Structure probing data (2A3 and DMS) for a 207-nucleotide construct.
For DMS the reverse transcriptase was MarathonRT.
Source: RMDB library M2RFPK, as collected in RNAgym.
RNA sequence: GGGAACGACUCGAGUAGAGUCGAAAACGAAGGAAAGCUUGACCAGCUAAUCUUCUGCAACGCCAUUAAGAGGACUGCCCUUAGAGGCUCAUGGCGAUAGGUCACCCCGCCGGUCGGUCAGCUGCUUAUACCCGUGCACGGUUCGCCGUGCACGGAACUACUCAUUGUGAUUCGUCACAAUGAGUAGAAAAGAAACAACAACAACAAC
Reactivity to 2A3 in 0.01 (KOAc 150mM, MgCl2 10mM, bicine 150mM(pH8.5), 24C), signal-to-noise 4, nucleotides 027 to 156: c020g010a030a020g060g030a230a160a010g010c010u040u030g000a010c000c010a000g010c010u030a030a090u040c010u040u010c010u030g050c040a080a070c020g010c020c010a040u100u090a100a060g040a060g150g110a090c090u090g010c010c000c020u070u110a110g050a170g120g000c020u010c020a000u010g000g000c010g020a040u110a090g040g020u060c030a100c010c020c000c000g040c030c040g050g050u090c030g000g010u050c050a020g030c060u140g010c030u150u120a060u060a180c020c000c000g010u000g000c000a000c000g000g030u020u030c170g020c040c000g010u010g000c010a000c000g000g000a000a000
Reactivity to DMS in 0.01 (KOAc 150mM, MgCl2 10mM, bicine 150mM(pH8.5), 24C), signal-to-noise 2, nucleotides 027 to 156: c070g010a070a020g000g030a090a160a050g020c010u010u010g000a040c040c030a300g000c010u000a030a220u010c050u000u000c010u010g000c040a130a160c020g030c000c000a070u010u000a120a120g000a140g010g030a110c070u000g000c010c010c030u010u010a140g010a100g030g080c000u000c050a040u000g000g000c000g000a130u010a120g020g030u020c050a190c040c020c010c030g030c030c050g010g000u000c040g030g000u000c010a150g020c000u010g010c020u000u000a230u000a120c130c000c010g040u010g020c000a020c000g000g000u000u000c300g030c010c000g060u010g000c000a000c000g020g000a000a040
About this RNA: 2A3 adducts were read by reverse transcription with SuperScript II with manganese.